[RMDB]
RNA sequence: GGGAACGACUCGAGUAGAGUCGAAAACCGCUCCGUGUUCGAGUCCCCUGUCACUCUGAAAUCGAACUGUGGAAGUUACUUCUCUCUGUCAGGGUUAUUUGUGGCUGUGACCUCACCCCUAGCCGCGAGCGAGGUACUAUUUCGAUAGUACCUCGCUAAAAGAAACAACAACAACAAC
Reactivity to DMS in 0.01 (KOAc 150mM, MgCl2 10mM, bicine 150mM(pH8.5), 24C), signal-to-noise 1, nucleotides 027 to 126: c010c020g000c080u040c060c030g000u000g040u020u000c020g000a030g020u000c050c010c010c030u010g000u000c060a040c020u000c000u000g000a030a100a130u000c040g000a060a010c020u010g040u010g000g000a050a070g010u000u000a110c210u000u020c010u010c000u020c060u000g000u000c060a070g020g000g040u000u000a030u000u020u000g020u000g000g000c000u000g030u030g000a100c010c000u000c070a070c050c000c000c070u000a130g020c020c010g010c080g020
Reactivity to 2A3 in 0.01 (KOAc 150mM, MgCl2 10mM, bicine 150mM(pH8.5), 24C), signal-to-noise 3, nucleotides 027 to 126: c000c000g020c040u020c010c000g040u020g060u110u030c000g000a070g080u050c010c030c000c020u080g060u040c000a010c040u030c040u110g080a030a120a110u140c080g010a030a010c010u070g000u070g080g050a040a020g060u110u020a130c010u050u070c040u000c000u020c040u040g050u050c020a030g050g020g030u080u050a150u080u150u100g070u040g020g000c040u010g060u080g050a090c000c020u020c060a050c000c000c020c020u020a040g010c010c010g000c010g000